This 207-nucleotide RNA was probed chemically with 2A3 and DMS. In probing experiments dimethyl sulfate is read out at A N1 and C N3, which are open when not base-paired. It was measured as part of the RMDB library OK3TST.
RNA sequence: GGGAACGACUCGAGUAGAGUCGAAAACAGUAUUGGAUUAUAGACUGCACUUAGUUUUCCGGAAUGAAGUACAGACAAAGCCAUAACGCGUGUACAACUACACAUUGUCCUAUAAUAUUGUCUGAUAAAAAACAGUGUAGAAAUAUUCUGACAGGGAAUUAAAUACUCCGUUCGCGGAGUAUUUAAUAAAAGAAACAACAACAACAAC
Reactivity to 2A3 in 0.01 (KOAc 150mM, MgCl2 10mM, bicine 150mM(pH8.5), 24C), signal-to-noise 2, nucleotides 027 to 156: c020a010g040u100a150u190u230g030g000a010u030u040a070u080a150g050a080c020u000g020c000a000c020u040u060a040g020u000u020u080u090c050c050g050g080a150a070u210g070a170a050g020u050a040c000a000g010a010c030a040a060a000g010c060c060a060u110a110a010c050g040c100g030u010g000u020a070c030a100a040c150u070a010c020a000c000a050u000u110g020u070c010c030u090a040u060a230a150u110a090u140u070g030u000c000u010g040a090u240a040a130a000a000a010a020c020a020g000u050g000u000a020g020a000a040a000u030a020u020u000c020u020g010a060c020a050g060g020g060a060
Reactivity to DMS in 0.01 (KOAc 150mM, MgCl2 10mM, bicine 150mM(pH8.5), 24C), signal-to-noise 1, nucleotides 027 to 156: c040a090g020u000a110u000u010g020g000a110u000u010a110u000a240g010a260c000u000g000c000a000c020u000u000a040g010u000u010u000u010c200c160g030g020a080a060u000g010a050a090g040u000a100c000a060g000a110c040a050a100a190g000c010c020a060u010a070a040c050g060c050g010u010g010u000a260c070a050a140c150u010a110c030a030c000a160u000u000g030u000c050c050u010a110u000a180a120u000a140u000u000g010u000c040u000g020a090u010a000a060a040a100a050a040c030a040g000u010g000u020a020g010a110a100a080u000a020u000u010c070u000g030a070c010a060g010g000g010a090